The data come from the RNA Mapping Database (RMDB), library OK1LIB. This 177-nucleotide RNA was probed chemically with 2A3. Values cover nucleotides 27 to 126. The 2A3 profile rests on 542 reads. The reactions ran in a buffer of 150 mM KOAc, 10 mM MgCl2 and 150 mM bicine (pH 8.5), at 24 C.

[RMDB]
RNA sequence: GGGAACGACUCGAGUAGAGUCGAAAACACGAGUAUCCGCAUUUACCAGCUACAAAUUGCACACUUGAGCCCCUCCCUCCCUCUUGAGAUAGAAGGGAAACCGAACAGGGGAAGCUGACGCCCGAACACUCGGCAGGUACUUCGGUACCUGCCGAGUAAAAGAAACAACAACAACAAC
Reactivity to 2A3 in 0.01 (KOAc 150mM, MgCl2 10mM, bicine 150mM(pH8.5), 24C), signal-to-noise 1, nucleotides 027 to 126: c040a000c060g000a050g080u060a040u120c040c000g010c000a100u060u060u140a080c110c040a020g050c010u080a050c100a080a070a250u180u040g000c030a000c000a000c010u080u130g000a000g030c000c000c000c000u000c020c000c000u000c000c000c000u010c010u000u110g040a070g000a040u150a070g050a050a090g010g000g090a030a020a000c120c080g040a070a020c110a140g000g000g000g000a010a000g010c040u010g030a020c010g140c000c000c000g060a080a060c010